[RMDB]
An RNA of 170 nucleotides, treated with 2A3 and read out base by base. For 2A3 the reverse transcriptase was SuperScript II with manganese. Reactivities are given for positions 27 through 129. The RNA was probed in 150 mM KOAc, 10 mM MgCl2 and 150 mM bicine (pH 8.5) at 24 C.
RNA sequence: GGGAACGACUCGAGUAGAGUCGAAAAGCUUAGAUUGCACACCGUUGAGUCAGGUGAUAUUAACGUUGUUGCAGCUUCCGGAUCUUUGACACGUAAAGUGAAGUUACUAUUUAGGGCUUCAUUUUAUUAACCGAUGGGUUCGCCCAUCGGAAAAGAAACAACAACAACAAC
Reactivity to 2A3 in 0.01 (KOAc 150mM, MgCl2 10mM, bicine 150mM(pH8.5), 24C), signal-to-noise 4, nucleotides 027 to 129: g010c000u070u130a040g000a130u090u130g000c010a000c000a000c000c000g000u040u040g040a020g070u010c080a080g030g300u260g260a040u250a210u080u020a010a000c010g000u010u020g030u060u090g000c040a000g000c000u080u070c000c010g020g040a020u000c020u020u030u140g070a020c020a010c170g010u000a030a000a000g000u000g030a020a020g040u010u030a300c020u080a140u170u260u280a040g000g000g000c000u000u000c000a010u010u030u000u000a030u020u040a000a040